Conditions: 150 mM KOAc, 10 mM MgCl2 and 150 mM bicine (pH 8.5), 24 C. Chemical mapping of a 177-nucleotide RNA with DMS and 2A3. For 2A3 the reverse transcriptase was SuperScript II with manganese. High 2A3 reactivity points to a flexible backbone, as in loops and unpaired stretches. For DMS, 1,138 sequencing reads were counted. For DMS the reverse transcriptase was MarathonRT.
RNA sequence: GGGAACGACUCGAGUAGAGUCGAAAAGAAAGGCAGCGAGUGCAGCCCACGCAGCGGCAUGCUUUUGCAUGCCCAGUCGAGCCCACGACUCAGGGCAGCUGCGUCACUGAGGGCAGCUGCCGAAAGAAGUGGGCCUAUGGUUCGCCAUAGGCCCACUAAAAGAAACAACAACAACAAC
Reactivity to DMS in 0.01 (KOAc 150mM, MgCl2 10mM, bicine 150mM(pH8.5), 24C), signal-to-noise 2, nucleotides 027 to 126: g000a070a140a130g000g050c000a000g000c010g010a120g000u010g000c130a020g030c000c010c150a070c050g000c000a040g000c030g030g000c030a000u000g010c030u010u000u000u000g040c040a070u000g000c000c000c030a020g000u000c110g000a160g020c000c010c000a270c040g010a030c060u000c160a110g000g000g010c020a070g010c000u000g000c030g000u000c300a130c140u000g000a060g010g000g000c000a150g000c000u000g020c000c000g000a010a080a080g000a150
Reactivity to 2A3 in 0.01 (KOAc 150mM, MgCl2 10mM, bicine 150mM(pH8.5), 24C), signal-to-noise 2, nucleotides 027 to 126: g050a070a060a000g020g020c030a000g000c040g050a110g210u240g110c070a000g030c030c010c000a000c000g050c010a010g010c030g050g070c020a000u020g030c010u240u180u160u300g010c000a010u020g000c040c000c000a000g020u000c000g020a020g030c000c000c000a030c010g040a000c020u050c080a060g020g000g010c010a010g000c000u010g000c000g040u060c060a100c210u150g120a110g030g020g020c010a000g020c020u000g000c050c020g010a000a000a000g030a020